RNA sequence: GGGAACGACUCGAGUAGAGUCGAAAAAGAAGCAACCCGCUUCUCGCCUCGUUAACAUGGAUGUUUUCAGGCAAAAAAUUCAAACUUUCGUCGCGUUACUUGCGCGACUUUGAAUGUGCGGGAUUGCCAUGCGCACUUAGUUCGCUAAGUGCGCAUGAAAAGAAACAACAACAACAAC
Reactivity to DMS in 0.01 (KOAc 150mM, MgCl2 10mM, bicine 150mM(pH8.5), 24C), signal-to-noise 3, nucleotides 027 to 126: a060g010a130a170g000c020a020a010c020c010c000g010c010u000u000c100u000c130g010c000c010u000c220g030u000u000a010a000c010a140u010g010g010a130u020g010u000u000u000u000c010a030g010g000c010a000a020a060a050a060a030u010u000c020a010a020a070c300u000u000u010c200g000u010c000g020c000g020u000u000a120c300u010u000g010c010g000c000g000a020c020u010u000u000g000a020a000u000g010u000g010c010g000g000g020a140u000u000g010c010